[RMDB]
RNA sequence: GGGAACGACUCGAGUAGAGUCGAAAAUUCUUUUACCCAGAUUCACGGCCCGGACAUCUCGUCCAUCACGGCUCGCCCAAUCAGGCCAGCCGUGGCCGCCGACCCUACAGGGUUGCGCCGGCCUCCGCAUAUUUGCAUGUUUCGACAUGCAAAUAUGAAAAGAAACAACAACAACAAC
Reactivity to 2A3 in 0.01 (KOAc 150mM, MgCl2 10mM, bicine 150mM(pH8.5), 24C), signal-to-noise 9, nucleotides 027 to 126: u050u030c010u030u110u040u130a120c000c010c010a020g040a140u100u100c070a020c070g010g000c010c030c000g000g020a010c010a080u110c100u050c170g040u000c010c010a020u060c010a000c000g000g000c000u000c010g010c000c000c010a120a260u200c070a020g000g000c010c020a000g000c000c010g000u020g000g010c000c000g000c000c000g010a010c010c000c000u110a150c130a150g010g020g000u000u020g050c100g010c080c070g010g000c000c010u040c020c030g030
Reactivity to DMS in 0.01 (KOAc 150mM, MgCl2 10mM, bicine 150mM(pH8.5), 24C), signal-to-noise 9, nucleotides 027 to 126: u020u010c050u020u010u010u020a130c030c010c010a120g000a160u010u010c100a100c070g000g000c080c080c080g000g010a040c040a070u020c150u020c110g000u010c010c020a140u030c060a030c000g010g010c010u000c300g000c000c000c070a070a160u060c300a110g000g000c000c070a030g020c010c000g010u000g000g000c060c030g010c030c020g000a030c010c000c000u040a130c300a190g000g000g000u000u000g000c100g030c060c080g010g000c000c020u000c040c060g000
The record gives the reactivity of an RNA of 177 nucleotides to 2A3 and DMS.
DMS adducts were read by reverse transcription with MarathonRT.
It was measured as part of the RMDB libraries RFM100 and RFMREP.
2A3 adducts were read by reverse transcription with SuperScript II with manganese.